The record gives the reactivity of an RNA of 207 nucleotides to DMS and 2A3. High 2A3 reactivity points to a flexible backbone, as in loops and unpaired stretches. For 2A3 the reverse transcriptase was SuperScript II with manganese. Reactivities are given for positions 27 through 156. Conditions: 150 mM KOAc, 10 mM MgCl2 and 150 mM bicine (pH 8.5), 24 C. Source: RMDB library OK3TST, as collected in RNAgym.
RNA sequence: GGGAACGACUCGAGUAGAGUCGAAAAACUCACAUACCCUGGCUGGAUGGAGGAGCAGGGACAGAGUUUAUGAUAGAUGGACAGGGAGAUGAACAAGCCAGCUGUGCUUCCCACUGACCAAUUUCUAAUAGAAUUUAAGAGCCAGGGUGUGUAAGCACGAAUACAGCUAUUUCGAUAGCUGUAUUCGAAAAGAAACAACAACAACAAC
Reactivity to DMS in 0.01 (KOAc 150mM, MgCl2 10mM, bicine 150mM(pH8.5), 24C), signal-to-noise 2, nucleotides 027 to 156: a040c020u010c010a040c010a020u000a080c070c000c020u000g020g000c020u000g020g000a200u000g020g020a170g000g020a080g030c000a070g010g030g000a110c010a070g010a080g010u000u000u030a040u020g010a130u000a090g010a130u000g010g010a140c050a100g020g020g000a080g010a110u010g000a050a100c060a060a170g010c030c030a090g020c080u010g000u000g000c020u000u000c020c010c020a060c050u010g000a100c070c020a030a090u000u000u000c020u000a090a160u000a230g000a060a060u000u000u000a070a110g000a110g030c000c000a020g000g000g030u010g010u000g000u010a010a010g030c010a170
Reactivity to 2A3 in 0.01 (KOAc 150mM, MgCl2 10mM, bicine 150mM(pH8.5), 24C), signal-to-noise 6, nucleotides 027 to 156: a000c020u020c000a010c000a000u020a010c000c000c000u000g010g030c020u040g060g090a170u060g060g030a080g040g010a050g000c050a060g010g010g040a020c030a010g080a010g010u000u090u120a120u100g050a030u030a130g080a050u060g060g020a010c040a040g060g040g010a110g020a080u140g030a090a070c050a070a030g050c040c020a020g030c100u080g030u060g080c010u050u000c010c000c010a080c030u040g040a050c020c010a040a050u070u090u030c030u050a080a090u080a240g030a040a020u080u140u100a220a070g040a000g020c000c010a000g010g000g000u000g000u000g000u010a030a010g040c040a000